[RMDB]
Chemical mapping of a 177-nucleotide RNA with 2A3 and DMS. Reactivities are given for positions 27 through 126. 2A3 adducts were read by reverse transcription with SuperScript II with manganese. Conditions: 150 mM KOAc, 10 mM MgCl2 and 150 mM bicine (pH 8.5), 24 C. Source: RMDB library OK2TRN, as collected in RNAgym.
RNA sequence: GGGAACGACUCGAGUAGAGUCGAAAACAGUGGGUGCAGGGCUGCAGGAGGGCCGGGAGGGCUAAUCUUCAACUUGUCCAUGCCAGCAGCCCCUUUUUUUCCAGACCAAGGGCUGUGAACCCGCCUGCAUUACUGUUGCGUUCGCGCAACAGUAAUGAAAAGAAACAACAACAACAAC
Reactivity to 2A3 in 0.01 (KOAc 150mM, MgCl2 10mM, bicine 150mM(pH8.5), 24C), signal-to-noise 2, nucleotides 027 to 126: c040a030g060u030g040g020g050u120g040c050a040g000g000g000c020u040g000c010a010g010g060a030g000g020g040c050c060g030g040g000a110g000g000g080c030u070a100a080u060c050u160u060c060a080a030c040u000u030g020u020c030c020a080u200g090c000c000a010g000c000a000g040c000c000c010c000u140u070u000u010u030u220u030c030c030a040g020a030c010c020a060a050g130g000g000c010u000g010u040g050a020a040c000c000c020g020c000c030u070g010
Reactivity to DMS in 0.01 (KOAc 150mM, MgCl2 10mM, bicine 150mM(pH8.5), 24C), signal-to-noise 3, nucleotides 027 to 126: c110a080g010u000g020g000g020u000g040c100a140g000g010g020c090u000g020c030a050g030g040a110g010g000g000c060c180g000g000g000a220g000g000g000c130u000a080a060u000c080u010u000c050a030a140c060u010u010g000u000c010c000a070u010g020c020c030a100g020c030a030g000c020c030c000c010u030u010u010u000u020u000u000c050c030a100g010a080c090c120a070a110g010g010g030c000u020g020u000g000a070a140c000c010c010g000c060c070u010g000